[RMDB]
This 177-nucleotide RNA was probed chemically with DMS and 2A3.

RNA sequence: GGGAACGACUCGAGUAGAGUCGAAAACUGUGGUACUAUACCUCAGUUUUAUCAGGUGUUCAUUAAAAUCACCUGAAAAUACUGAGGCUAUGUUUCACUGAAACAGUGAAGGGUUCGCCCUUCACUGGGUACCAAACAAGUUCGCUUGUUUGGUACCAAAAGAAACAACAACAACAAC
Reactivity to DMS in 0.01 (KOAc 150mM, MgCl2 10mM, bicine 150mM(pH8.5), 24C), signal-to-noise 3, nucleotides 027 to 126: c010u010g010u000g010g010u010a010c010u000a160u010a090c010c000u000c000a010g000u000u000u000u000a090u000c000a010g020g010u000g020u000u000c140a220u020u040a060a090a120a070u000c000a000c000c000u000g000a000a060a030a030u000a020c000u000g000a000g000g030c070u000a050u000g010u000u000u000c010a020c000u010g020a080a080a230c020a020g010u000g000a020a000g010g000g020u000u010c220g020c010c000c000u000u000c010a010c000u000g010
Reactivity to 2A3 in 0.01 (KOAc 150mM, MgCl2 10mM, bicine 150mM(pH8.5), 24C), signal-to-noise 5, nucleotides 027 to 126: c010u010g010u010g010g020u020a010c010u040a040u040a050c000c000u000c000a000g000u000u000u010u040a170u020c000a000g000g000u010g030u090u120c160a170u160u300a060a100a060a120u060c000a000c000c000u000g000a010a000a000a000u100a010c000u000g000a000g000g000c020u020a020u050g000u000u030u050c010a000c020u100g140a140a100a020c010a000g000u000g000a000a000g040g020g000u030u080c180g110c000c000c000u000u000c000a000c000u000g010
About this RNA: The 2A3 profile rests on 8,874 reads. 2A3 adducts were read by reverse transcription with SuperScript II with manganese. It was measured as part of the RMDB library RFMREP.